[RMDB]
RNA sequence: GGGAACGACUCGAGUAGAGUCGAAAACUCUCCGUGCUUCGGCACGGAGAGAAGUCCUGAGUUCGCUCAGGACAAUUAUAGCUCAUCAAUUGCGUAGAUGAGCGCAGUGUAUUUAUAGCUCUUCGGAGGUAUUUAUACAGUGCAGGGAUACGCAAAAGAUCAUAACAGAAUUCGUUCUGUUAUGAUCAAAAGAAACAACAACAACAAC
Reactivity to DMS in 0.01 (KOAc 150mM, MgCl2 10mM, bicine 150mM(pH8.5), 24C), signal-to-noise 2, nucleotides 027 to 156: c010u010c000u000c000c000g040u000g040c020u010u010c300g020g000c000a010c000g070g040a010g000a010g000a030a060g010u000c000c000u020g000a020g050u000u000c300g000c030u000c000a030g000g010a000c020a000a010u010u000a080u010a090g010c000u000c010a020u000c020a040a070u000u010g000c010g020u000a300g000a020u000g000a040g030c020g010c020a010g020u000g010u000a000u010u000u000a000u000a040g010c000u000c010u000u020c290g040g000a040g020g000u000a010u000u010u010a010u000a020c000a000g010u000g000c030a200g040g000g030a170u000a060c000g020c010a020a130a130a300
Reactivity to 2A3 in 0.01 (KOAc 150mM, MgCl2 10mM, bicine 150mM(pH8.5), 24C), signal-to-noise 5, nucleotides 027 to 156: c000u000c000u000c000c000g000u000g010c000u050u110c200g100g000c000a000c000g000g010a000g000a000g000a010a020g010u000c000c000u000g000a000g010u050u130c240g020c100u010c000a000g000g010a000c000a000a000u050u010a070u090a060g000c000u010c000a010u010c000a010a270u080u040g000c010g010u020a000g010a010u000g030a020g020c000g000c010a030g140u010g000u010a010u010u010u000a020u010a040g070c000u000c010u030u090c230g060g000a000g040g010u000a010u000u010u000a010u010a000c010a020g140u000g000c000a020g070g060g060a070u070a090c010g000c000a010a020a020a050
This 207-nucleotide RNA was probed chemically with DMS and 2A3. Reactivities are given for positions 27 through 156. The reactions ran in a buffer of 150 mM KOAc, 10 mM MgCl2 and 150 mM bicine (pH 8.5), at 24 C. The DMS profile rests on 4,085 reads.